[RMDB]
An RNA of 207 nucleotides, treated with DMS and 2A3 and read out base by base. Source: RMDB library OK3TST, as collected in RNAgym. The RNA was probed in 150 mM KOAc, 10 mM MgCl2 and 150 mM bicine (pH 8.5) at 24 C.
RNA sequence: GGGAACGACUCGAGUAGAGUCGAAAAUGUGUAAUGAAGAACUAGAAUUAAUUGGUAGACUGAAAGGCAGAAUUCAGCUCAAUGUAAGGAAUGACUCUCUACCAUAGCUGUCAAAAUGGAACAUUGUAAGGUAGUAUGUUCCCUGUCACCCUGGAACCCGUUCACUUUUUUUCGAAAAAGUGAACGGAAAAGAAACAACAACAACAAC
Reactivity to DMS in 0.01 (KOAc 150mM, MgCl2 10mM, bicine 150mM(pH8.5), 24C), signal-to-noise 2, nucleotides 027 to 156: u000g060u010g030u010a110a000u000g000a050a140g010a070a110c030u000a080g000a090a130u000u020a050a150u010u010g010g020u000a040g000a080c040u020g010a030a110a130g020g040c060a110g010a150a270u000u000c030a050g040c030u010c080a080a080u000g010u010a160a090g010g000a100a050u040g000a050c040u010c000u000c010u010a080c020c010a030u000a050g010c010u010g000u000c060a010a080a110a140u020g010g030a040a040c050a040u000u010g040u010a110a100g010g000u000a080g000u010a040u040g000u000u000c020c010c100u000g020u000c020a050c020c010c000u020g000g020a080a190c140
Reactivity to 2A3 in 0.01 (KOAc 150mM, MgCl2 10mM, bicine 150mM(pH8.5), 24C), signal-to-noise 3, nucleotides 027 to 156: u110g030u000g030u080a030a060u100g040a060a090g020a020a070c050u050a050g060a180a080u110u100a060a050u140u120g060g000u050a040g030a090c030u050g090a060a090a070g040g000c010a020g010a070a090u090u050c020a030g030c030u030c040a020a080u040g030u070a060a000g040g050a030a040u090g050a050c020u020c000u010c010u070a010c000c020a030u090a040g000c030u040g050u120c040a000a040a060a110u080g030g010a040a010c020a020u060u140g060u160a060a050g020g030u040a010g000u000a040u070g000u000u020c000c000c000u000g010u030c040a050c030c020c000u050g030g080a050a040c010